Source: RMDB library OK3TST, as collected in RNAgym. The record gives the reactivity of an RNA of 207 nucleotides to 2A3 and DMS. The reactions ran in a buffer of 150 mM KOAc, 10 mM MgCl2 and 150 mM bicine (pH 8.5), at 24 C.

[RMDB]
RNA sequence: GGGAACGACUCGAGUAGAGUCGAAAAGUGUUCGUGUGAGAGUGUGAUCGUGUGUACGUGAGUGUGUGUUCUCUCGAACGUGAGUGUUCGAGAGAGUUCGUUCGAGAUCACACACGUGAUCACUCGAGAGUACGAGUGAGUACACUCUCGUGUUCUCAUAGUAAGUUAAGUUCGCUUAACUUACUAUAAAAGAAACAACAACAACAAC
Reactivity to 2A3 in 0.01 (KOAc 150mM, MgCl2 10mM, bicine 150mM(pH8.5), 24C), signal-to-noise 9, nucleotides 027 to 156: g090u070g020u060u090c110g000u060g020u080g090a060g000a000g010u010g000u010g020a020u020c010g000u000g000u010g010u030a070c090g080u120g100a070g020u100g000u020g010u020g050u080u010c000u000c000u000c010g000a000a000c010g020u130g130a130g110u300g010u010u000c000g000a000g000a000g000a000g000u020u040c020g020u030u040c050g020a060g010a290u120c030a000c000a000c000a000c000g000u010g020a040u010c000a000c000u000c000g000a010g000a010g010u080a030c010g000a010g000u020g020a050g070u090a030c070a020c050u010c020u010c020g000u010g010u020u000c010u000c010
Reactivity to DMS in 0.01 (KOAc 150mM, MgCl2 10mM, bicine 150mM(pH8.5), 24C), signal-to-noise 7, nucleotides 027 to 156: g020u000g010u000u000c160g010u000g030u000g000a090g010a050g030u000g020u000g010a120u000c030g030u000g020u000g010u000a070c110g010u010g010a100g020u000g020u010g030u010g010u010u000c010u000c000u000c010g000a010a010c010g000u010g020a250g030u010g010u000u000c010g010a040g010a020g010a010g010u000u000c040g010u000u000c030g010a130g010a110u000c060a020c000a020c010a010c020g010u000g000a230u000c010a030c010u000c000g000a090g010a150g030u000a060c020g010a160g020u000g010a110g020u000a070c070a040c020u000c010u000c030g030u000g000u010u000c010u000c030